[RMDB]
RNA sequence: GGGAACGACUCGAGUAGAGUCGAAAAGAGGGGUGGUCCUGCGGGCGCGAGGAAGGACACCCGAAGAAAGGAAGGGUGAAAACCCUGUUUCGGCGGGAAUUACUCCUGUCGGCCGCUGGGCACUCCCGACUCUAUUAAUGUUCGCAUUAAUAGAGUCAAAAGAAACAACAACAACAAC
Reactivity to DMS in 0.01 (KOAc 150mM, MgCl2 10mM, bicine 150mM(pH8.5), 24C), signal-to-noise 4, nucleotides 027 to 126: g010a150g010g000g010g020u000g010g010u010c010c010u000g010c030g020g000g000c030g010c090g010a060g000g000a050a020g000g000a160c300a070c010c000c010g000a020a010g010a020a020a050g010g010a100a040g010g000g020u000g000a090a060a100a020c000c000c000u000g010u000u000u000c000g010g010c020g000g000g000a060a060u000u010a160c020u000c000c010u000g000u010c010g010g000c010c000g010c010u000g000g000g000c010a020c010u000c000c000c030
Reactivity to 2A3 in 0.01 (KOAc 150mM, MgCl2 10mM, bicine 150mM(pH8.5), 24C), signal-to-noise 3, nucleotides 027 to 126: g190a080g000g010g000g010u060g000g070u070c000c000u010g010c000g010g040g030c030g000c020g060a020g030g010a110a080g000g000a010c020a030c020c000c000g000a020a010g020a000a020a010g130g190a060a030g020g000g000u020g010a050a030a010a010c010c000c010u000g050u000u030u010c010g010g010c000g000g000g020a070a050u100u090a080c010u000c000c000u030g110u080c020g010g120c000c000g000c010u010g000g000g000c010a000c010u000c000c000c010
Structure probing data (DMS and 2A3) for a 177-nucleotide construct. Source: RMDB library VIROID, as collected in RNAgym. Conditions: 150 mM KOAc, 10 mM MgCl2 and 150 mM bicine (pH 8.5), 24 C.